[RMDB]
This 177-nucleotide RNA was probed chemically with DMS and 2A3. DMS adducts were read by reverse transcription with MarathonRT. The 2A3 profile rests on 1,942 reads. Conditions: 150 mM KOAc, 10 mM MgCl2 and 150 mM bicine (pH 8.5), 24 C.
RNA sequence: GGGAACGACUCGAGUAGAGUCGAAAAGACGGAUUCUUCGGAAUCCGUCAAAGUGACGGUGAAAAAUGGCCAAUGCGCCAGCUUCCACCGACACAGGGCGCAAAACUGGAGUGUUCGCACUCCAGAACCGGUAAACUAUCUUCGGAUAGUUUACCGGAAAAGAAACAACAACAACAAC
Reactivity to DMS in 0.01 (KOAc 150mM, MgCl2 10mM, bicine 150mM(pH8.5), 24C), signal-to-noise 2, nucleotides 027 to 126: g010a000c030g010g000a000u000u000c010u000u000c230g030g000a030a000u000c000c000g030u010c000a010a040a110g010u000g000a080c020g010g000u010g000a010a000a010a110a230u000g000g000c000c040a130a150u000g020c170g010c000c000a000g030c180u000u000c020c000a000c000c000g010a110c040a020c020a170g000g000g020c060g000c160a040a060a110a120c000u010g000g000a020g030u000g000u020u010c240g000c000a010c000u010c000c000a000g020a060a080
Reactivity to 2A3 in 0.01 (KOAc 150mM, MgCl2 10mM, bicine 150mM(pH8.5), 24C), signal-to-noise 2, nucleotides 027 to 126: g010a000c000g000g030a010u030u070c050u070u100c200g040g000a020a010u000c000c000g000u000c000a010a010a000g010u000g010a020c020g020g000u010g010a040a010a010a010a030u030g000g000c030c060a180a300u300g040c200g010c040c020a000g010c020u030u040c020c010a010c000c000g000a020c000a000c000a010g080g050g070c160g000c120a040a090a050a060c000u000g000g010a010g000u020g030u050u060c200g050c060a010c000u060c000c000a000g000a000a020